[RMDB]
RNA sequence: GGGAACGACUCGAGUAGAGUCGAAAAAAAGGAAUACCUCUACCUGCAAUCCCUUUUUCUACCGACGCAGGUAGAUUGUGCGCUAAACACAAAAUAUUGUACACGUCUUUGUGCGGAAUAUAUCCGUUAUAGUGCUGGCCCGGCAUCUGAUCGCCAAACAAGCACUAUUGUUCGCAAUAGUGCUUGUAAAAGAAACAACAACAACAAC
Reactivity to DMS in 0.01 (KOAc 150mM, MgCl2 10mM, bicine 150mM(pH8.5), 24C), signal-to-noise 1, nucleotides 027 to 156: a070a070a090g000g010a140a080u000a050c050c040u000c020u000a030c000c000u010g000c020a240a200u000c020c010c030u000u000u010u000u020c130u040a160c030c020g030a050c070g030c030a030g000g010u010a000g000a070u000u010g010u010g000c080g030c090u000a070a100a040c030a030c030a080a040a080a140u000a020u000u000g000u030a050c080a000c020g000u010c110u010u010u010g010u000g030c000g020g000a090a070u000a100u000a090u000c070c050g010u000u000a090u000a060g030u010g020c030u000g010g000c060c030c050g010g000c010a100u020c120u000g000a080u010c020g010c020c000a020a200
Reactivity to 2A3 in 0.01 (KOAc 150mM, MgCl2 10mM, bicine 150mM(pH8.5), 24C), signal-to-noise 2, nucleotides 027 to 156: a000a000a000g150g020a140a100u110a130c030c010u050c000u020a000c000c000u000g000c010a050a130u140c020c010c000u130u030u030u020u020c050u070a070c040c030g060a030c140g020c020a010g000g010u000a000g000a000u010u070g020u000g010c030g020c120u060a080a150a000c050a020c000a030a130a000a030u190a090u120u100g040u110a020c100a030c050g020u020c090u060u050u140g030u050g040c010g030g080a060a010u180a000u010a030u170c010c020g020u000u060a120u060a110g090u090g000c030u010g010g050c000c000c040g030g000c000a020u010c060u090g080a150u140c050g020c030c010a070a070